[RMDB]
RNA sequence: GGGAACGACUCGAGUAGAGUCGAAAAGACUUGGCCGACACGGUGGAACGGAUCGACGACGUUCUCGGCACCGUCCGAAAGUUCGUGAGCGACAACAGAUCCGUGCUGGCUGCCGAUGUCAACAACCCCCACGCGUCUCAUUCGUGAGACGCGUGGGAAAAGAAACAACAACAACAAC
Reactivity to 2A3 in 0.01 (KOAc 150mM, MgCl2 10mM, bicine 150mM(pH8.5), 24C), signal-to-noise 2, nucleotides 027 to 126: g000a000c010u010u100g010g090c000c020g010a050c130a110c190g050g000u040g100g000a060a030c010g030g020a010u000c000g030a010c010g010a000c010g020u110u030c040u040c020g030g000c100a160c080c100g190u150c000c000g100a150a070a020g020u110u060c000g000u010g050a050g050c080g130a090c040a120a010c060a060g000a010u000c000c000g050u000g020c010u140g140g000c000u000g000c000c000g060a090u150g010u000c000a000a000c010a000a000c010c000